[RMDB]
RNA sequence: GGGAACGACUCGAGUAGAGUCGAAAAUUAGUUCUGGCCUGCCCUGUCCAAGCACAGAGUAGGAUCACGAGGCCCAAAUGAAAAUAUGGGCUUCUUGAUUCCUAAAGCGGGGCGGACCGCAUGAGGCUGGCUUCACAGAGCAGUGAACAGCUCCCGCGAAGUACUAUUUGUUCGCAAAUAGUACUUCAAAAGAAACAACAACAACAAC
Reactivity to 2A3 in 0.01 (KOAc 150mM, MgCl2 10mM, bicine 150mM(pH8.5), 24C), signal-to-noise 4, nucleotides 027 to 156: u100u060a040g050u070u050c040u090g040g030c000c010u020g010c010c010c000u030g030u070c080c100a140a040g060c080a110c030a150g100a030g130u060a010g020g010a000u010c010a000c030g010a000g000g000c000c000c000a050a100a040u200g070a120a070a040a000u190a120u060g000g000g000c000u000u000c010u000u000g000a010u190u230c000c000u040a070a050a010g020c020g010g000g030g010c020g020g050a090c010c020g030c050a030u100g020a020g100g010c000u020g000g020c000u030u040c020a020c020a050g130a020g090c100a030g000u010g040a070a010c000a020g000c020u020c000c000c010g050c050
Reactivity to DMS in 0.01 (KOAc 150mM, MgCl2 10mM, bicine 150mM(pH8.5), 24C), signal-to-noise 1, nucleotides 027 to 156: u010u010a100g010u020u000c000u040g010g050c030c020u010g040c000c000c000u010g010u000c030c060a160a220g030c030a210c040a110g000a150g000u000a010g030g000a020u000c010a010c040g010a030g000g010c010c000c050a040a130a120u000g000a190a080a100a150u000a220u000g000g010g010c010u000u000c000u000u000g010a040u000u030c000c000u010a060a110a110g000c010g010g010g030g050c070g050g010a050c020c020g000c110a100u010g000a110g020g000c010u000g000g000c060u010u000c070a050c020a060g000a090g010c040a150g000u000g000a110a030c020a110g010c030u000c010c000c020g000c250